[RMDB]
RNA sequence: GGGAACGACUCGAGUAGAGUCGAAAAUAGGGACAUAAGUUCAUUCAUGCCAAGUAUCUUUCCAGCAUGUUUCUCCCAUUUAGAAUAUCUAGCAUGUAAGGCCUUUCAAUAUUAAUAUAAGCCCAAUUGUCAAAAUUAAGUUCGCUUAAUUUUGACAAAAAGAAACAACAACAACAAC
Reactivity to 2A3 in 0.01 (KOAc 150mM, MgCl2 10mM, bicine 150mM(pH8.5), 24C), signal-to-noise 5, nucleotides 027 to 126: u110a010g040g000g020a020c020a040u260a080a090g020u090u100c000a020u130u040c000a010u070g000c010c020a120a020g040u070a060u110c010u020u040u020c020c010a000g000c040a040u030g000u000u110u000c010u010c020c000c000a000u040u090u130a040g030a060a030u050a030u110c020u040a010g030c030a030u060g040u040a070a050g040g000c000c000u030u060u020c030a050a030u030a060u300u140a070a050u190a060u040a150a040g000c000c000c020a040a080u050
Reactivity to DMS in 0.01 (KOAc 150mM, MgCl2 10mM, bicine 150mM(pH8.5), 24C), signal-to-noise 2, nucleotides 027 to 126: u000a010g010g010g020a060c300a100u020a020a060g010u000u000c060a080u010u030c030a040u020g000c010c090a040a050g010u000a040u020c020u000u000u000c040c030a050g010c040a090u010g020u010u020u000c050u000c040c000c020a100u010u020u010a130g000a070a090u020a040u000c020u020a070g000c070a010u000g010u010a050a110g000g000c030c010u000u000u020c040a040a140u020a110u020u010a020a150u030a180u000a060a190g010c010c010c010a080a140u000